[RMDB]
RNA sequence: GGGAACGACUCGAGUAGAGUCGAAAAGAUAUGGAACGAAUAAUAGAACUACCACGACGUAUCGGAAACGAUACCAAGUGGCUAUUACUAUUCCUAAGUCAAACCGUCUGACUUCGGUCAGACGGAAGUCAAAUACAUGGUUCGCCAUGUAUUUGACAAAAGAAACAACAACAACAAC
Reactivity to 2A3 in 0.01 (KOAc 150mM, MgCl2 10mM, bicine 150mM(pH8.5), 24C), signal-to-noise 6, nucleotides 027 to 126: g010a020u080a050u160g020g000a050a030c080g060a300a300u020a030a000u010a020g040a100a070c140u210a090c270c000a000c010g020a020c030g010u000a010u000c000g000g030a090a060a020c000g000a000u010a000c000c000a040a070g000u000g000g020c000u000a010u000u010a010c040u040a070u040u000c010c010u040a160a010g050u020c040a030a050a130c010c000g000u000c010u010g020a020c010u030u110c300g090g000u000c000a000g000a000c010g010g000a010a010
Reactivity to DMS in 0.01 (KOAc 150mM, MgCl2 10mM, bicine 150mM(pH8.5), 24C), signal-to-noise 5, nucleotides 027 to 126: g020a040u010a300u000g000g010a010a020c120g010a080a110u010a010a010u000a010g010a100a070c090u030a300c010c000a010c010g000a300c300g010u010a010u000c000g000g000a100a080a230c000g000a020u000a000c000c000a010a290g000u000g000g000c000u000a000u000u000a010c060u000a290u000u000c010c010u010a030a140g010u000c040a070a110a170c000c000g000u000c000u000g000a020c000u000u010c210g020g010u010c010a000g000a000c000g000g010a000a030
The record gives the reactivity of an RNA of 177 nucleotides to 2A3 and DMS. The reactions ran in a buffer of 150 mM KOAc, 10 mM MgCl2 and 150 mM bicine (pH 8.5), at 24 C. The DMS profile rests on 3,776 reads.